[RMDB]
RNA sequence: GGGAACGACUCGAGUAGAGUCGAAAAGUUAUUUCAAUGCUGUCUUCUAUCCCUAAGAACAGUUGUAACAUACAGUGGCUAUGUGUAUCUGCCUCUAAAUUAUUUGUAAUCAUGCCAAUCCUAUCUUCCUACCUCCGCCAUUCGUGGCGGAGGUAGGAAAAGAAACAACAACAACAAC
Reactivity to 2A3 in 0.01 (KOAc 150mM, MgCl2 10mM, bicine 150mM(pH8.5), 24C), signal-to-noise 1, nucleotides 027 to 126: g000u000u000a290u000u160u050c050a080a200u000g000c000u000g000u120c090u160u020c000u090a280u160c000c000c160u070a210a000g070a220a000c040a050g000u090u090g170u300a160a070c000a090u070a000c000a000g000u000g000g210c000u000a000u030g120u080g050u110a000u190c140u100g000c050c000u020c000u000a120a120a120u170u100a160u190u000u020g050u030a040a160u120c190a100u160g000c020c000a000a030u160c000c000u100a100u020c000u000u000